RNA sequence: GGGAACGACUCGAGUAGAGUCGAAAAGAUAUGGACAUGCAAACGAUAUUGGCCACCUUUUGACGAAUACGACUCGGAAACGAGUCGAAUAUUCGAUAAGGUGGAUAUCGUUUGCAUGUCCUAAGUCGACAUACAUUCUGUUCGCAGAAUGUAUGUCAAAAGAAACAACAACAACAAC
Reactivity to DMS in 0.01 (KOAc 150mM, MgCl2 10mM, bicine 150mM(pH8.5), 24C), signal-to-noise 4, nucleotides 027 to 126: g010a100u000a300u010g000g010a020c000a010u000g000c000a010a000a020c010g010a010u000a020u010u010g040g020c020c010a030c000c000u000u000u000u020g040a300c170g010a030a020u000a050c010g000a020c000u000c000g010g000a100a110a260c000g010a010g020u000c010g000a040a040u010a020u000u000c000g020a140u010a010a020g020g030u000g000g000a040u000a000u000c010g020u000u000u000g000c000a010u000g010u000c000c010u000a010a080g010u000c100
An RNA of 177 nucleotides, treated with DMS and read out base by base. Values are in units of 0.01, from 0 to 300, in steps of 10. Source: RMDB library TTRINS, as collected in RNAgym.